[RMDB]
RNA sequence: GGGAACGACUCGAGUAGAGUCGAAAAAUCGGCAGCCAAGCGCUAAGGGAGUCUCAUUUUAACUGAUGAGGCUCUGAAGCGUGCAGUUCACAGACUAAAUGGUGGUGGGUUCCCUUGGGGAGCUUAAGAUAUAGUCGGUCCCCACCGCAAGGUGGGCGAAUCAGUGGAUCUUCGGAUCCACUGAUUCAAAAGAAACAACAACAACAAC
Reactivity to 2A3 in 0.01 (KOAc 150mM, MgCl2 10mM, bicine 150mM(pH8.5), 24C), signal-to-noise 1, nucleotides 027 to 156: a000u030c030g080g000c020a010g090c000c010a120a000g000c010g030c030u090a110a210g090g010g000a010g020u010c000u000c000a030u060u030u090u200a120a110c090u030g000a000u010g000a000g000g000c000u000c000u000g010a020a000g000c000g030u000g000c020a010g000u060u060c040a030c030a120g090a070c020u070a030a080a070u110g050g000u010g000g030u000g080g030g000u030u050c000c010c000u030u070g030g010g000g010a000g000c000u080u050a150a070g070a010u090a070u100a110g060u010c030g000g030u060c020c020c000c000a000c010c000g020c090a040a010g000g000u000g010g000g000c000

Chemical mapping of a 207-nucleotide RNA with 2A3. For 2A3, 539 sequencing reads were counted. 2A3 adducts were read by reverse transcription with SuperScript II with manganese. Source: RMDB library ARCHII, as collected in RNAgym. The RNA was probed in 150 mM KOAc, 10 mM MgCl2 and 150 mM bicine (pH 8.5) at 24 C.